[RMDB]
RNA sequence: GGGAACGACUCGAGUAGAGUCGAAAAAUUUUCAGAGAAGUAAGCGAAUGGAAAUUCAGAUUCAUUUACAACGUGUUGCUCAAGACAUCGGCAUAUCAGAUCUUACUUCAUUCGAUCUUGCAGAAGCGACUCAUACGAGGUUCGCCUCGUAUGAGUCAAAAGAAACAACAACAACAAC
Reactivity to DMS in 0.01 (KOAc 150mM, MgCl2 10mM, bicine 150mM(pH8.5), 24C), signal-to-noise 3, nucleotides 027 to 126: a090u020u010u010u020c050a080g010a100g000a070a130g000u000a060a010g040c040g000a030a010u010g000g010a010a030a090u020u020c150a020g000a120u000u000c090a110u070u010u010a040c100a080a080c120g040u010g000u000u030g000c190u050c220a090a060g000a070c070a010u030c090g040g000c210a020u000a050u030c240a070g000a070u000c000u020u100a070c100u020u000c000a050u000u000c000g030a040u080c020u000u020g000c100a030g000a080a150g010c160
Reactivity to 2A3 in 0.01 (KOAc 150mM, MgCl2 10mM, bicine 150mM(pH8.5), 24C), signal-to-noise 4, nucleotides 027 to 126: a000u110u090u080u110c010a000g030a000g030a230a030g030u060a000a000g010c000g030a000a000u010g000g140a000a040a100u110u080c070a020g020a050u050u070c030a020u090u100u190a120c100a160a010c070g070u070g050u020u070g050c080u070c190a070a010g060a060c030a060u160c030g030g030c080a030u060a140u120c030a020g030a060u020c020u060u020a040c000u000u060c000a020u000u020c000g060a070u070c000u000u050g030c010a040g080a180a020g110c070

Overview: Chemical mapping of a 177-nucleotide RNA with DMS and 2A3. It was measured as part of the RMDB library OK1LIB. 2A3 adducts were read by reverse transcription with SuperScript II with manganese. Values cover nucleotides 27 to 126. For 2A3, 2,682 sequencing reads were counted.